[RMDB]
Overview:
This 207-nucleotide RNA was probed chemically with 2A3. The 2A3 profile rests on 547 reads.
RNA sequence: GGGAACGACUCGAGUAGAGUCGAAAAUGUUCAAACAUGUGAUCUCACAGUAGGUAGUGGUUACUGUGUGGAUUACUCCACACAAUUACGGAGUCGUAGAGCGAUUACCACUGGUUAUCGGUUUACUAAUUUUGAGCCAUUUACUGUUAAUGCAGUACCCACUGGACUGAUUCGUCAGUCCAGUGGGAAAAGAAACAACAACAACAAC
Reactivity to 2A3 in 0.01 (KOAc 150mM, MgCl2 10mM, bicine 150mM(pH8.5), 24C), signal-to-noise 1, nucleotides 027 to 156: u120g000u070u160c050a000a090a030c050a040u090g010u010g050a040u010c040u010c060a010c060a110g030u040a020g080g020u030a010g010u030g030g080u010u100a040c070u030g000u000g000u040g030g020a020u040u140a050c050u000c000c000a050c010a000c000a050a080u050u020a010c060g070g020a050g090u040c030g000u040a000g010a010g130c040g000a010u000u060a010c000c010a160c300u130g000g040u000u040a030u100c000g000g050u000u010u000a080c080u080a030a150u030u090u060u130g040a000g040c010c010a010u030u030u100a000c000u000g000u040u190a090a130u300g010c000a000g010u010a010
Record summary
It was measured as part of the RMDB library OK3TST.